[RMDB]
RNA sequence: GGGAACGACUCGAGUAGAGUCGAAAACCCACACAGUUGUUCCCACUCUUAUUUGUGACUAUGGCCUUCGUUAUGUUGUUGGUUAAACACAAACACACCUUUUUGACACUUUUCUUGUUGCCUGUGGCCUAGAACUAGGGUUCGCCCUAGUUCUAGGAAAAGAAACAACAACAACAAC
Reactivity to 2A3 in 0.01 (KOAc 150mM, MgCl2 10mM, bicine 150mM(pH8.5), 24C), signal-to-noise 2, nucleotides 027 to 126: c010c000c010a010c000a000c010a000g000u000u000g000u040u000c010c020c000a000c030u050c050u080u120a150u160u050u000g070u020g040a040c030u070a070u120g010g000c000c010u050u040c040g090u140u100a120u200g140u120u050g050u010u010g080g000u020u050a050a090a000c000a000c000a040a050a000c030a010c000a010c040c000u070u090u050u070u120g010a020c010a010c040u050u120u080u040c060u020u100g080u050u030g020c010c040u100g040u060g060g000
Reactivity to DMS in 0.01 (KOAc 150mM, MgCl2 10mM, bicine 150mM(pH8.5), 24C), signal-to-noise 3, nucleotides 027 to 126: c000c000c010a150c300a180c220a020g020u000u000g010u000u000c000c010c010a170c210u000c070u000u000a150u000u000u010g010u000g000a070c030u010a060u020g020g000c020c050u010u000c060g000u000u000a150u010g020u000u000g010u000u000g010g010u010u000a070a100a100c050a010c050a050a060a040c110a060c090a080c070c020u010u010u000u000u000g000a050c040a060c030u000u010u000u000c050u000u020g000u010u010g030c050c020u000g010u010g020g000

About this RNA
An RNA of 177 nucleotides, treated with 2A3 and DMS and read out base by base. For DMS the reverse transcriptase was MarathonRT. For DMS, 2,032 sequencing reads were counted. For 2A3 the reverse transcriptase was SuperScript II with manganese.